Chemical mapping of a 207-nucleotide RNA with 2A3 and DMS. The reactions ran in a buffer of 150 mM KOAc, 10 mM MgCl2 and 150 mM bicine (pH 8.5), at 24 C. Values cover nucleotides 27 to 156. The 2A3 profile rests on 1,496 reads. For DMS the reverse transcriptase was MarathonRT.

RNA sequence: GGGAACGACUCGAGUAGAGUCGAAAACACAAGGCAAGAACAACUCAGGAGGACAAGAUGGACAAGCUCAACGAAAUCGCCAAGAAAGCCGUAGCCCGCGCUAUCGAGGCCGGACUGAUCGAGGCUACCGAUCAGGAAGCCCGCAAGGCCGUCGCCGUAGUAUAGGAUCCUUCGGGAUCCUAUACUAAAAAGAAACAACAACAACAAC
Reactivity to 2A3 in 0.01 (KOAc 150mM, MgCl2 10mM, bicine 150mM(pH8.5), 24C), signal-to-noise 2, nucleotides 027 to 156: c030a000c020a020a020g070g000c020a050a000g050a110a020c030a050a010c060u030c090a050g020g040a020g030g010a050c050a120a020g030a070u080g000g030a020c010a000a040g020c020u010c030a010a080c050g040a040a040a110u080c060g000c010c050a010a000g070a070a050a010g020c020c000g060u040a010g000c000c040c000g020c040g000c030u070a050u140c020g030a080g050g000c010c020g030g080a010c020u020g000a020u040c020g040a040g020g010c000u030a090c010c020g020a010u020c010a000g020g010a010a020g020c020c000c000g050c060a030a000g050g020c010c010g010u020c000g000c000c000g030
Reactivity to DMS in 0.01 (KOAc 150mM, MgCl2 10mM, bicine 150mM(pH8.5), 24C), signal-to-noise 2, nucleotides 027 to 156: c030a100c040a070a080g020g010c020a080a080g030a100a080c040a090a110c040u000c080a060g000g010a090g010g000a090c050a080a090g000a110u010g000g010a080c050a090a070g020c110u000c030a060a140c070g010a040a090a080u000c060g040c040c020a040a160g010a090a060a110g030c030c030g050u000a120g010c020c000c060g000c120g030c040u000a100u010c090g000a120g010g020c020c010g000g030a260c010u010g000a050u020c010g020a090g010g000c070u000a080c040c000g000a040u000c010a070g010g000a180a140g010c000c010c020g000c060a050a050g000g040c000c020g010u000c000g000c020c040g020